Background: Structure probing data (DMS and 2A3) for a 177-nucleotide construct. Values cover nucleotides 27 to 126. Source: RMDB library OK2TST, as collected in RNAgym.
RNA sequence: GGGAACGACUCGAGUAGAGUCGAAAAGAACGUCGCCGCGGUCGUGGGGUCCGAGCACAGUGCUACUCCCGGCCAUUCACCGGGCUUGAACGGGAUCACGACGGCACCCAGUGCGUCCGGAUGCACCAACGUUUUCAACUUUCGAGUUGAAAACGUUAAAAGAAACAACAACAACAAC
Reactivity to DMS in 0.01 (KOAc 150mM, MgCl2 10mM, bicine 150mM(pH8.5), 24C), signal-to-noise 2, nucleotides 027 to 126: g020a110a110c100g010u000c030g000c040c040g000c080g020g020u000c030g020u000g010g000g010g000u000c060c050g000a080g000c060a080c120a130g030u000g000c080u020a160c150u000c000c000c010g000g010c020c040a100u010u030c140a120c040c040g000g010g000c100u020u010g000a050a110c060g000g000g010a040u010c070a090c070g000a030c030g020g000c030a120c020c040c040a130g010u020g020c030g000u000c060c040g010g000a090u000g010c110a090c070c110
Reactivity to 2A3 in 0.01 (KOAc 150mM, MgCl2 10mM, bicine 150mM(pH8.5), 24C), signal-to-noise 1, nucleotides 027 to 126: g030a090a010c010g020u000c020g010c060c020g040c040g020g020u030c020g050u070g000g000g020g070u080c050c020g000a010g010c030a100c010a070g070u070g110c020u050a030c010u020c020c000c000g000g010c030c000a010u100u030c010a030c000c040g010g040g000c020u080u070g030a110a040c010g000g020g000a010u070c020a010c070g070a010c000g060g020c050a050c000c030c020a050g030u050g030c010g030u040c000c030g060g020a080u090g040c020a020c040c020